RNA sequence: GGGAACGACUCGAGUAGAGUCGAAAACAUAUUAAUUUCGUGCGCUAUGAUGCAAGCCGAGAAUGCUUAUCUCGUAAAAAAGCAGACAAAGAAAUAAAUGCAAACAAUAUUAUUGAAAUUAGCAAUAUUAGAAAACCAGCUCUAGUAGUCUAGCCUGCUAUUAUUGGUGGUUCGCCACCAAUAAUAGAAAAGAAACAACAACAACAAC
Reactivity to 2A3 in 0.01 (KOAc 150mM, MgCl2 10mM, bicine 150mM(pH8.5), 24C), signal-to-noise 2, nucleotides 027 to 156: c020a020u250a100u290u230a120a130u070u110u110c060g030u050g020c050g020c020u070a030u270g050a030u070g030c030a040a010g010c000c010g040a010g010a070a070u120g000c020u040u100a060u110c030u020c020g040u110a020a000a000a080a080a000g010c020a010g040a060c080a050a210a020g050a130a120a000u080a040a080a040u080g010c000a040a090a030c000a070a010u050a070u300u090a030u050u110g030a050a100a060u110u070a050g000c000a000a030u020a080u160u090a030g070a040a080a010a020c030c010a010g000c010u000c010u040a040g030u010a010g010u010c000u020a010g030c000c020u020g040
Reactivity to DMS in 0.01 (KOAc 150mM, MgCl2 10mM, bicine 150mM(pH8.5), 24C), signal-to-noise 1, nucleotides 027 to 156: c030a160u010a130u010u000a050a040u000u030u010c000g080u010g000c030g000c050u000a080u010g000a090u000g030c050a030a090g040c170c050g030a130g000a090a120u000g010c010u020u000a150u000c060u000c010g030u010a010a050a120a110a140a100g000c100a070g000a160c070a120a120a130g040a110a080a100u010a010a070a100u000g020c020a000a040a090c020a070a070u020a060u010u000a080u000u010g000a050a050a090u000u000a100g010c000a030a100u000a130u000u000a100g000a130a040a040a120c010c040a050g010c050u000c050u000a030g020u000a050g020u000c010u000a080g030c000c000u000g010